[RMDB]
RNA sequence: GGGAACGACUCGAGUAGAGUCGAAAAAAAAAAGAUAUGGACACGAACUACUCGUUUGUACGCUGAUGACCGCUUUCGGAAACGAAAGCGCAAGGCGUACAUACGAGCGUGUCCUAAGUCAAAAAAAGCUGUAAAUAAAGUUCGCUUUAUUUACAGCAAAAGAAACAACAACAACAAC
Reactivity to 2A3 in 0.01 (KOAc 150mM, MgCl2 10mM, bicine 150mM(pH8.5), 24C), signal-to-noise 1, nucleotides 027 to 126: a020a000a030a010a030a070g040a070u140a110u100g000g020a010c000a000c010g040a090a010c080u230a020c010u300c040g000u030u040u000g000u010a010c020g000c020u030g040a300u150g040a140c050c030g000c010u000u030u000c000g000g040a060a020a010c000g000a000a000a000g010c000g020c000a010a020g000g000c010g000u000a000c000a000u000a000c000g000a010g060c000g000u000g010u000c000c000u000a000a000g010u000c030a050a050a000a020a050a180a050
Reactivity to DMS in 0.01 (KOAc 150mM, MgCl2 10mM, bicine 150mM(pH8.5), 24C), signal-to-noise 3, nucleotides 027 to 126: a020a030a080a100a100a100g010a040u000a300u010g000g000a010c000a000c000g000a100a040c040u030a300c020u000c000g040u000u000u000g000u000a010c000g010c010u020g010a170u000g010a110c300c000g000c000u000u010u030c000g050g000a140a090a200c010g000a020a000a010g020c010g000c020a010a190g000g000c000g020u000a000c000a000u010a020c010g000a000g000c020g000u000g010u000c010c000u000a010a070g000u020c020a000a000a050a120a090a100a140